[RMDB]
RNA sequence: GGGAACGACUCGAGUAGAGUCGAAAAUCAAGCUCUGCGGCAUAAACCUCUCCACUUCUAAUAUGAAACCUUUCCAUUCUUAAGUCAGAUGAAACGUCCUGCUGCAAACAUGGGCGACAGCUAUUGCCGGCAUUUAUUAGUUCGCUAAUAAAUGCCGAAAAGAAACAACAACAACAAC
Reactivity to 2A3 in 0.01 (KOAc 150mM, MgCl2 10mM, bicine 150mM(pH8.5), 24C), signal-to-noise 8, nucleotides 027 to 126: u070c000a020a010g030c020u010c030u090g020c020g030g000c020a020u110a050a120a040c020c000u000c000u030c020c010a040c020u060u040c030u060a130a160u070a110u190g090a100a040a040c000c010u000u050u020c030c010a040u040u060c020u070u060a070a040g040u050c040a020g030a140u050g060a070a130a020c020g030u030c000c000u020g020c010u070g030c030a030a100a020c020a090u090g010g020g000c030g020a040c020a010g020c010u090a050u180u130g060c030
Reactivity to DMS in 0.01 (KOAc 150mM, MgCl2 10mM, bicine 150mM(pH8.5), 24C), signal-to-noise 3, nucleotides 027 to 126: u030c090a100a140g030c050u000c030u000g010c040g030g010c040a090u000a070a110a140c090c010u000c020u000c020c040a080c100u020u000c030u020a050a080u020a070u030g010a070a090a120c030c020u010u000u000c000c000a060u010u000c020u000u030a080a060g000u020c040a130g000a110u000g000a020a120a100c050g020u000c000c010u000g000c060u000g030c160a050a050a120c040a040u010g010g000g010c040g000a030c080a060g020c040u000a100u010u000g020c210